[RMDB]
RNA sequence: GGGAACGACUCGAGUAGAGUCGAAAAGCUCAAAGCAAAGCUGCAGGAAACCGAGACGAAGCUGCAGGAAAUUGAGAGGAAGCUGCAGGACGGCGAGGGGCAGCUGCAGGAAGGUGAGAGGCAGCUGGCUGUGAGAAUACUUCGGUAUUCUCACAGCAAAAGAAACAACAACAACAAC
Reactivity to 2A3 in 0.01 (KOAc 150mM, MgCl2 10mM, bicine 150mM(pH8.5), 24C), signal-to-noise 2, nucleotides 027 to 126: g040c010u030c030a070a060a000g070c010a090a080a040g030c020u010g010c000a010g110g180a130a070a040c020c010g030a040g030a060c020g020a070a030g020c000u020g000c030a000g040g090a050a110a060u180u200g080a120g020a020g110g060a060a040g020c010u030g000c040a020g040g080a040c020g000g000c030g020a030g000g010g010g010c010a030g020c000u000g000c010a020g070g050a050a050g030g000u090g030a090g020a040g010g000c030a020g030c020u070g030
Reactivity to DMS in 0.01 (KOAc 150mM, MgCl2 10mM, bicine 150mM(pH8.5), 24C), signal-to-noise 2, nucleotides 027 to 126: g000c000u010c050a050a120a180g030c090a100a070a110g020c020u000g000c020a060g000g020a070a210a110c050c060g020a270g000a100c070g010a080a090g010c020u000g020c040a030g000g010a020a060a130u000u000g000a090g000a170g000g000a110a110g010c030u010g010c000a060g010g000a220c040g020g010c040g000a110g000g010g010g000c110a050g010c020u030g010c020a040g010g000a100a050g020g010u000g000a130g000a100g000g010c030a030g010c060u000g010